[RMDB]
RNA sequence: GGGAACGACUCGAGUAGAGUCGAAAAAUUGGCACACCUUAUGAGGGAAUUGUAGACACCUUAGUUUCUCUGAUUAAUGUGUUAACAAGGUUUACUUGGUUCCAGGAAGUGGUGCUAUAUGGUAAAACACCGAUAUAGGCUUCGGCCUAUAUCGGUGAAAAGAAACAACAACAACAAC
Reactivity to DMS in 0.01 (KOAc 150mM, MgCl2 10mM, bicine 150mM(pH8.5), 24C), signal-to-noise 2, nucleotides 027 to 126: a080u000u000g000g000c010a000c020a040c040c000u000u000a110u000g010a210g030g010g020a020a020u000u000g010u000a010g010a300c160a020c040c000u000u000a110g000u000u000u000c050u000c020u000g010a240u000u010a070a040u010g010u000g000u000u000a040a030c000a030a010g010g000u000u000u000a060c020u000u000g020g000u000u000c000c000a150g020g010a040a030g010u000g000g020u010g010c000u000a020u000a040u000g000g030u000a060a100a060a120
An RNA of 177 nucleotides, treated with DMS and read out base by base. The RNA was probed in 150 mM KOAc, 10 mM MgCl2 and 150 mM bicine (pH 8.5) at 24 C. DMS adducts were read by reverse transcription with MarathonRT.